The record gives the reactivity of an RNA of 177 nucleotides to 2A3 and DMS.
Reactivities are given for positions 27 through 126.
As a SHAPE reagent, 2A3 marks flexible, mostly unpaired nucleotides at the ribose 2'-OH.
The data come from the RNA Mapping Database (RMDB), library 15KREP.
Conditions: 150 mM KOAc, 10 mM MgCl2 and 150 mM bicine (pH 8.5), 24 C.
The 2A3 profile rests on 598 reads.
2A3 adducts were read by reverse transcription with SuperScript II with manganese.
RNA sequence: GGGAACGACUCGAGUAGAGUCGAAAAUUUGCCUGGGGCUUUUGCGUACAGUCAGAUGAGGCCUCAUGUUCGUUACGACUUGUAUGAUGGUAACAUGUUUAUUAAAUUUCCUGAAGUAGUAUUUGAACUCCUUAUACAACUUCGGUUGUAUAAGGAGAAAAGAAACAACAACAACAAC
Reactivity to 2A3 in 0.01 (KOAc 150mM, MgCl2 10mM, bicine 150mM(pH8.5), 24C), signal-to-noise 1, nucleotides 027 to 126: u010u020u100g010c000c010u030g110g000g010g000c000u010u120u300u300g020c040g050u050a080c080a130g040u050c020a010g080a070u050g040a050g020g040c010c010u000c000a020u080g000u000u020c040g000u000u050a010c020g020a040c050u070u030g050u080a090u090g050a010u070g020g020u000a000a020c040a020u110g020u000u060u000a120u030u050a140a100a100u030u040u010c000c020u020g050a070a010g000u100a020g000u040a160u120u090u060g000a010a050
Reactivity to DMS in 0.01 (KOAc 150mM, MgCl2 10mM, bicine 150mM(pH8.5), 24C), signal-to-noise 3, nucleotides 027 to 126: u000u010u000g000c050c010u000g000g010g010g010c080u000u020u000u030g020c070g010u000a150c120a060g010u010c050a060g000a070u010g000a120g010g010c020c030u000c070a020u000g020u020u000c070g000u000u010a080c070g000a060c050u000u010g020u020a050u000g000a110u010g020g010u000a020a050c060a030u000g000u000u000u010a070u020u000a080a100a140u000u000u000c010c010u010g010a080a090g010u000a050g020u000a090u010u000u000g000a130a200